Structure probing data (DMS) for a 177-nucleotide construct. It was measured as part of the RMDB library OK2TST. For DMS the reverse transcriptase was MarathonRT.
[RMDB]
RNA sequence: GGGAACGACUCGAGUAGAGUCGAAAAAUAAUGACGCGAAUGAGUCGUCUACCUGAUGGUGUCGGUCCGUUGAAUCUUGCGCUACGUGAAAAUCUCCCUCUGGAUAUCGUCAUGACUCUGGCGAAAAAUAAAAUGCUCCUUUCGAGGAGCAUUUUAUAAAAGAAACAACAACAACAAC
Reactivity to DMS in 0.01 (KOAc 150mM, MgCl2 10mM, bicine 150mM(pH8.5), 24C), signal-to-noise 1, nucleotides 027 to 126: a230u000a120a050u020g020a040c040g000c010g000a190a150u050g000a040g000u000c000g000u000c060u000a160c010c010u000g030a090u000g000g030u000g010u010c020g010g030u000c010c030g010u000u010g000a090a080u000c040u000u000g030c050g000c030u000a030c030g000u010g000a060a060a130a120u010c070u000c020c020c020u020c080u000g000g000a140u010a070u020c030g010u000c000a040u020g020a100c110u000c110u000g000g000c040g000a010a140a040a100

Description
The reactions ran in a buffer of 150 mM KOAc, 10 mM MgCl2 and 150 mM bicine (pH 8.5), at 24 C.